RNA sequence: GGGAACGACUCGAGUAGAGUCGAAAACUCAACCCGGGAACGGCAGGGCAUACUGGCGGUCUUGAGGGAUCUAGGGGCAGACAGAACAGUCGGUGGAGCGGUGAAAUGCGUAGAGAUCGACUGGAAUCAAUGCAGAUUCAUUCGUGAAUCUGCAUUGAAAAGAAACAACAACAACAAC
Reactivity to DMS in 0.01 (KOAc 150mM, MgCl2 10mM, bicine 150mM(pH8.5), 24C), signal-to-noise 3, nucleotides 027 to 126: c030u010c060a120a110c050c010c020g030g000g000a090a090c110g010g010c030a070g000g000g010c180a070u030a050c010u000g010g020c050g020g010u020c030u000u000g010a180g000g010g000a060u010c080u030a100g000g000g000g000c020a050g010a070c160a070g030a110a110c030a040g010u010c020g030g000u000g000g000a090g000c000g020g000u000g010a060a160a120u080g000c020g010u000a120g020a230g000a030u000c010g000a020c010u010g000g020a090a130u020
Reactivity to 2A3 in 0.01 (KOAc 150mM, MgCl2 10mM, bicine 150mM(pH8.5), 24C), signal-to-noise 6, nucleotides 027 to 126: c030u040c020a040a090c000c000c000g010g010g030a070a050c020g070g020c020a030g020g070g060c040a060u090a190c040u050g050g040c030g020g010u000c010u050u060g040a190g020g020g010a020u020c020u120a060g020g000g000g010c020a020g010a070c030a020g080a150a010c000a010g020u010c000g000g020u010g020g000a010g010c030g000g020u130g080a120a090a090u210g010c010g050u150a030g010a010g000a080u020c000g020a020c010u020g020g040a000a040u030

Overview: Structure probing data (DMS and 2A3) for a 177-nucleotide construct. For 2A3 the reverse transcriptase was SuperScript II with manganese. Conditions: 150 mM KOAc, 10 mM MgCl2 and 150 mM bicine (pH 8.5), 24 C.